[RMDB]
RNA sequence: GGGAACGACUCGAGUAGAGUCGAAAAGAUAUGGAUGCUCGUUCUAAGGACAUCGAUCUCGGAAACGAGGGAGUCCUGACGAGGCAUCCUAAGUCAAAAGCUAUCAUGAGUUCGCUCAUGAUAGCAAGCUCGAACAUAGGUUCGCCUAUGUUCGAGCAAAAGAAACAACAACAACAAC
Reactivity to 2A3 in 0.01 (KOAc 150mM, MgCl2 10mM, bicine 150mM(pH8.5), 24C), signal-to-noise 1, nucleotides 027 to 126: g020a020u100a040u170g000g000a010u000g000c010u000c010g050u260u070c100u190a060a070g000g020a020c000a240u300c180g070a130u000c010u000c010g010g010a100a080a050c030g030a000g000g050g010a010g010u010c010c030u010g000a000c020g020a020g010g180c010a000u000c000c000u000a050a020g000u010c040a000a120a000a000g000c000u010a000u030c000a010u020g000a010g020u140u100c200g110c090u020c010a010u000g000a000u010a000g050c000a000a000
Reactivity to DMS in 0.01 (KOAc 150mM, MgCl2 10mM, bicine 150mM(pH8.5), 24C), signal-to-noise 2, nucleotides 027 to 126: g000a040u000a300u010g000g020a000u010g000c000u000c010g000u020u010c220u010a080a030g000g020a010c000a280u020c150g000a090u000c010u010c030g000g000a120a080a190c010g010a060g010g000g010a060g000u000c010c010u000g000a000c010g000a030g010g020c010a000u000c000c000u000a000a070g000u010c030a060a090a070a110g010c000u000a010u000c000a000u000g000a010g010u010u010c240g010c000u000c000a010u020g010a000u000a000g020c000a040a040
An RNA of 177 nucleotides, treated with 2A3 and DMS and read out base by base. The data come from the RNA Mapping Database (RMDB), library TTRDEL. For DMS, 1,148 sequencing reads were counted. Values are in units of 0.01, from 0 to 300, in steps of 10. DMS adducts were read by reverse transcription with MarathonRT. The reactions ran in a buffer of 150 mM KOAc, 10 mM MgCl2 and 150 mM bicine (pH 8.5), at 24 C.